[RMDB]
RNA sequence: GGGAACGACUCGAGUAGAGUCGAAAAAGACCACCUCUACGGAGGUGGUCAAGUCACGUAGCUAGUACCAGGUUGCAAUACUAGAGCGUUAGUGCUGGGGCGUACGGUGGCAGUACGCUGCCACCGAUAAAACUUGAAUACUUCGGUAUUCAAGUAAACAAUGUUACCGGUUCGCCGGUAACAUUGUAAAAGAAACAACAACAACAAC
Reactivity to DMS in 0.01 (KOAc 150mM, MgCl2 10mM, bicine 150mM(pH8.5), 24C), signal-to-noise 2, nucleotides 027 to 156: a110g010a020c020c010a040c010c000u010c000u010a070c300g060g010a010g020g040u000g000g000u020c000a010a040g020u000c120a060c050g020u000a130g000c030u000a040g020u000a070c030c010a140g010g020u000u010g030c090a100a080u000a000c000u000a080g000a270g000c030g030u000u010a070g020u000g010c050u000g010g020g030g030c070g020u000a050c000g020g030u000g000g090c010a100g040u000a110c180g050c000u000g000c000c000a000c000c000g000a030u000a010a070a060a080c000u020u000g000a010a010u000a010c000u000u000c270g050g010u000a010u010u010c000a000a030g010u000a020a080
Reactivity to 2A3 in 0.01 (KOAc 150mM, MgCl2 10mM, bicine 150mM(pH8.5), 24C), signal-to-noise 1, nucleotides 027 to 156: a000g010a010c000c000a010c010c000u010c000u020a080c300g110g000a000g000g000u000g000g000u000c000a000a010g010u010c000a000c060g030u020a040g070c010u030a010g010u050a030c070c120a080g080g090u120u080g060c080a040a050u020a100c000u030a050g000a030g080c030g020u060u080a030g030u050g050c010u020g000g000g050g000c030g060u060a050c030g040g000u000g020g000c020a000g000u060a040c300g020c050u000g010c000c010a000c000c000g000a000u020a010a030a010a000c000u000u000g000a000a000u000a010c000u010u080c230g050g000u000a000u000u000c000a000a000g010u000a010a000
Structure probing data (DMS and 2A3) for a 207-nucleotide construct. The DMS profile rests on 3,019 reads. 2A3 adducts were read by reverse transcription with SuperScript II with manganese. The reactions ran in a buffer of 150 mM KOAc, 10 mM MgCl2 and 150 mM bicine (pH 8.5), at 24 C.